About this RNA
Chemical mapping of a 177-nucleotide RNA with 2A3 and DMS. For 2A3, 868 sequencing reads were counted. High 2A3 reactivity points to a flexible backbone, as in loops and unpaired stretches. Source: RMDB library OK2TRN, as collected in RNAgym.
[RMDB]
RNA sequence: GGGAACGACUCGAGUAGAGUCGAAAAGGCUUUUUACCAACAUCGAUAAUUUCAGUAGUCAAAUUCGCAUAUUGUAAAAUUAACGGAUUCACUAAUCGAUCAUAUAGUAUAACAUCCGCUUCACGUAGCGUUCCGUUAUAUUCGUAUAACGGAACGCAAAAGAAACAACAACAACAAC
Reactivity to 2A3 in 0.01 (KOAc 150mM, MgCl2 10mM, bicine 150mM(pH8.5), 24C), signal-to-noise 2, nucleotides 027 to 126: g070g000c060u100u090u040u090u080a060c010c000a030a030c000a030u040c020g000a010u010a110a160u100u190u200c070a070g090u050a020g050u020c050a030a110a090u030u040c010g020c070a050u050a030u150u100g040u170a020a090a090a120u040u060a060a080c010g030g000a000u020u050c030a010c030u060a100a000u070c040g080a000u040c080a060u190a050u070a130g100u050a050u050a150a020c030a080u150c020c000g010c060u050u030c080a020c090g090u030a000
Reactivity to DMS in 0.01 (KOAc 150mM, MgCl2 10mM, bicine 150mM(pH8.5), 24C), signal-to-noise 2, nucleotides 027 to 126: g000g000c120u000u000u000u000u000a080c020c090a120a140c200a050u000c000g000a050u000a180a140u010u000u020c160a150g010u000a010g010u040c170a030a010a040u000u000c030g020c070a200u000a010u000u030g000u040a020a070a040a010u030u000a270a150c060g000g010a000u000u000c220a050c030u000a050a030u010c030g000a030u000c100a080u000a070u000a030g000u000a070u000a070a060c070a090u010c040c010g000c060u010u000c070a070c220g020u000a120